[RMDB]
An RNA of 207 nucleotides, treated with 2A3 and read out base by base.

RNA sequence: GGGAACGACUCGAGUAGAGUCGAAAAGAAUCCAUGGCUCUGAUUUCCGAGUUUUCCCUUCAUCUCUCGACUUCUAAUGUUAGGGGGUCGGACAUCAGGAAUCGGGUUUUAUCUUGGCCUCAGAUCUGGUUCUUCGGAGCCAGCGGAGCAGAGGAGCGUACCUAAGGGAGUUCGCUCCCUUAGGUACAAAAGAAACAACAACAACAAC
Reactivity to 2A3 in 0.01 (KOAc 150mM, MgCl2 10mM, bicine 150mM(pH8.5), 24C), signal-to-noise 2, nucleotides 027 to 156: g020a010a050u020c020c020a050u060g050g000c000u030c000u060g040a040u090u040u060c010c040g020a040g050u010u050u180u250c010c000c010u030u060c050a060u030c040u000c010u060c100g110a100c030u120u110c070u280a150a050u050g060u030u090a060g060g000g010g000g010u020c020g000g000a000c000a000u000c030a040g060g070a070a060u090c060g050g000g000u000u020u050u070a120u110c010u010u080g080g010c000c000u020c000a060g010a160u060c000u000g000g020u000u000c000u000u050c190g080g000a000g000c000c030a020g020c060g020g010a060g000c030a020g030a020g020g000a000g030c050